[RMDB]
An RNA of 177 nucleotides, treated with 2A3 and DMS and read out base by base. The reactions ran in a buffer of 150 mM KOAc, 10 mM MgCl2 and 150 mM bicine (pH 8.5), at 24 C. It was measured as part of the RMDB library TTRDEL. Reactivities are given for positions 27 through 126.
RNA sequence: GGGAACGACUCGAGUAGAGUCGAAAAGAUAUGGAGCCAUCGCUCGAAGAACUAUGUUGAACAUCGGAAACGAUGAAACAUAGGGAGAGCGUAUGGCUCCUAAGUCAAACUUACCUUCGGGUAAGAACGACCUAGUAUCGUUCGCGAUACUAGGUCGAAAAGAAACAACAACAACAAC
Reactivity to 2A3 in 0.01 (KOAc 150mM, MgCl2 10mM, bicine 150mM(pH8.5), 24C), signal-to-noise 1, nucleotides 027 to 126: g010a000u050a010u080g010g020a000g040c000c010a010u010c000g000c000u040c010g140a250a060g000a030a000c010u010a020u000g050u020u110g070a230a080c000a070u020c000g040g010a080a020a000c000g030a000u020g060a180a020a000c010a000u000a000g000g000g000a030g000a000g010c010g040u060a010u000g000g000c010u020c000c000u000a020a000g000u010c010a000a000a040c010u020u010a000c020c000u020u010c300g090g000g000u030a010a010g000a050a090
Reactivity to DMS in 0.01 (KOAc 150mM, MgCl2 10mM, bicine 150mM(pH8.5), 24C), signal-to-noise 1, nucleotides 027 to 126: g000a050u000a220u040g010g010a010g020c000c010a000u000c000g000c000u000c000g000a100a130g000a110a250c000u000a000u000g000u020u000g000a230a140c020a050u000c000g020g000a170a050a150c000g000a020u010g000a130a030a010c000a040u000a000g000g000g010a100g000a000g010c000g000u000a010u000g000g020c000u000c000c000u010a020a050g010u000c000a090a120a100c010u000u000a010c010c000u000u020c190g020g000g000u010a000a000g000a080a280